[RMDB]
RNA sequence: GGGAACGACUCGAGUAGAGUCGAAAAAGAUGUGAGGGCGAUCUGGCUGCGACAUCUGUCACCCCAUUGAUCGCCAGGGUUGAUUCGGCUGAUCUGGCUGGCUAGGCGGUGUCCCCUUCCUCCCUCAAUUUCAUAAAGGCUUCGGCCUUUAUGAAAUAAAAGAAACAACAACAACAAC
Reactivity to DMS in 0.01 (KOAc 150mM, MgCl2 10mM, bicine 150mM(pH8.5), 24C), signal-to-noise 5, nucleotides 027 to 126: a030g000a040u010g020u010g010a110g000g000g000c200g010a050u010c060u010g010g030c130u000g020c090g010a060c020a050u020c040u010g010u010c080a100c060c120c000c040a130u020u010g020a040u020c050g000c000c000a100g000g020g030u020u020g010a120u020u010c070g000g000c040u020g000a060u020c050u010g010g000c050u000g000g010c080u000a100g000g010c080g010g010u010g000u000c010c020c000c040u000u000c020c010u010c000c020c010u000c080a100
Reactivity to 2A3 in 0.01 (KOAc 150mM, MgCl2 10mM, bicine 150mM(pH8.5), 24C), signal-to-noise 5, nucleotides 027 to 126: a000g080a040u090g030u040g070a090g030g060g010c050g040a070u040c040u080g050g000c040u070g040c050g030a010c000a050u020c050u050g020u000c020a190c000c000c000c000a030u040u200g010a040u050c010g000c000c010a040g050g020g000u120u090g050a130u150u090c060g010g000c040u070g010a070u030c010u020g060g030c040u040g020g000c020u050a070g020g000c010g050g000u020g010u030c000c010c010c000u020u050c000c010u020c000c000c000u020c010a030
The data come from the RNA Mapping Database (RMDB), libraries RFM100 and RFMREP. This 177-nucleotide RNA was probed chemically with DMS and 2A3. For 2A3 the reverse transcriptase was SuperScript II with manganese.